[RMDB]
RNA sequence: GGGAACGACUCGAGUAGAGUCGAAAAGGAGCGACUUGCGUCAUUGGUACUACAAAGUUCUACGGUGGCUGGGAUUUCAUGCUUAAAACAUUGUACAAAGAUGUUGAUAAUCCGCAUCUUAUGGGUUUACGUCUGCAGUUCGCUGCAGACAAAAGAAACAACAACAACAAC
Reactivity to 2A3 in 0.01 (KOAc 150mM, MgCl2 10mM, bicine 150mM(pH8.5), 24C), signal-to-noise 5, nucleotides 027 to 129: g040g010a000g000c020g070a060c030u020u060g020c040g080u040c020a060u060u120g060g010u070a020c000u000a040c070a010a130a010g020u040u040c010u020a040c060g050g000u000g030g000c020u020g040g000g000a000u010u060u090c010a020u030g030c020u060u110a040a010a030a020c020a080u070u170g050u110a050c040a010a070a010g020a000u010g020u050u050g050a030u080a170a070u060c060c020g000c000a020u000c000u040u080a120u100g050g000g000u030u050u070a090c050
Reactivity to DMS in 0.01 (KOAc 150mM, MgCl2 10mM, bicine 150mM(pH8.5), 24C), signal-to-noise 6, nucleotides 027 to 129: g000g000a040g000c000g000a070c010u000u030g020c120g030u020c060a090u000u000g000g000u040a040c130u000a040c060a100a070a080g040u000u000c090u030a120c090g030g060u030g000g000c060u000g040g020g050a070u010u010u070c020a070u030g070c100u000u000a030a030a050a060c100a060u040u030g040u040a110c030a100a080a060g010a100u020g030u010u040g030a110u000a120a110u010c080c080g030c060a030u010c030u000u000a080u020g010g030g040u010u010u010a050c120

An RNA of 170 nucleotides, treated with 2A3 and DMS and read out base by base. Conditions: 150 mM KOAc, 10 mM MgCl2 and 150 mM bicine (pH 8.5), 24 C. The data come from the RNA Mapping Database (RMDB), library 15KLIB. The DMS profile rests on 21,734 reads.